[RMDB]
RNA sequence: GGGAACGACUCGAGUAGAGUCGAAAAAAACUUUUGUGACUUGCUGAAACGGGACUAAUCUCCUCACCGAGGCUAAGCAAGUAAAAUACGCCUCUCAUAUCCUUACCUGAGGGGGGUAAGGAAAUAACCUGCAACGCUUCCUUCGGGAAGCGUUGAAUCUUUAACGGAAGUUCGCUUCCGUUAAAGAAAAAGAAACAACAACAACAAC
Reactivity to 2A3 in 0.01 (KOAc 150mM, MgCl2 10mM, bicine 150mM(pH8.5), 24C), signal-to-noise 1, nucleotides 027 to 156: a000a000a000c110u160u100u050u160g100u030g050a030c000u000u010g000c010u020g030a070a030a050c050g000g000g000a000c030u080a090a000u000c020u000c030c010u050c040a050c020c070g020a000g010g030c050u060a000a030g000c000a000a050g050u130a000a020a010a010u140a030c080g010c010c000u000c000u010c030a010u070a100u300c000c000u000u010a000c000c020u020g040a100g030g030g010g000g000g000u000a010a000g000g030a020a010a000u030a010a010c020c050u060g000c020a000a000c000g030c000u000u020c000c000u010u050c100g030g000g000a000a000g000c000g000u000u000g000a000a000